[RMDB]
RNA sequence: GGGAACGACUCGAGUAGAGUCGAAAAUGGGCUACCAGUAAGCGAAAAAUGAUACAGGACAAAAAAAACAUAAUUCGAGAUUUUUCAGGAUGGAUUUUUUUAGGUAUCUAUCAAAACUAUUCUGAUGCAACGUAGAGCACGUUCGCGUGCUCUACAACAUUGUCAUGCUCUUCGGAGCAUGACAAUGAAAAGAAACAACAACAACAAC
Reactivity to 2A3 in 0.01 (KOAc 150mM, MgCl2 10mM, bicine 150mM(pH8.5), 24C), signal-to-noise 1, nucleotides 027 to 156: u100g000g000g000c020u030a010c010c020a000g040u050a020a050g050c110g090a160a000a000a000a000u080g000a040u160a070c080a050g070g120a050c210a090a040a080a000a000a020a000a020c060a060u140a090a060u090u090c020g000a020g050a190u010u170u110u220u080c000a000g000g010a000u000g010g000a050u010u130u000u000u000u000u000a020g040g030u220a040u130c000u000a010u030c010a000a000a000a020c020u010a000u060u000c020u020g040a050u050g060c000a060a000c060g000u000a000g000a000g010c000a000c000g020u030u040c110g000c020g100u010g000c020u000c000u000a000c000a000a000

Description:
An RNA of 207 nucleotides, treated with 2A3 and read out base by base. It was measured as part of the RMDB library M2RFOK. For 2A3, 622 sequencing reads were counted. Reactivities are rounded to 0.1 and cut off at 0 and 3. Conditions: 150 mM KOAc, 10 mM MgCl2 and 150 mM bicine (pH 8.5), 24 C.